[RMDB]
Chemical mapping of a 177-nucleotide RNA with DMS.
The reactions ran in a buffer of 150 mM KOAc, 10 mM MgCl2 and 150 mM bicine (pH 8.5), at 24 C.
For DMS the reverse transcriptase was MarathonRT.
Source: RMDB library TTRDEL, as collected in RNAgym.

RNA sequence: GGGAACGACUCGAGUAGAGUCGAAAAGAUAUGGAUUAACGAGCCUGAUAUCGGAAACGAUAUCGAGGCGAUGAGUUACGGUCCUAAGUCAAACGAAGGGAUCAUAGUUCGCUAUGAUCCCUUCGAAGGCAAGUACCUGCUUCGGCAGGUACUUGCCAAAAGAAACAACAACAACAAC
Reactivity to DMS in 0.01 (KOAc 150mM, MgCl2 10mM, bicine 150mM(pH8.5), 24C), signal-to-noise 1, nucleotides 027 to 126: g000a080u000a300u000g000g010a020u000u000a020a070c020g030a300g010c000c000u000g000a000u000a000u000c000g000g000a140a140a250c000g020a020u000a020u010c000g030a000g030g020c000g000a050u010g000a090g030u000u000a040c300g020g000u000c000c000u000a070a120g000u020c030a020a100a270c050g000a040a010g020g000g000a010u000c000a020u000a000g010u000u000c240g070c010u010a000u000g010a000u000c000c000c000u000u000c000g000a010a010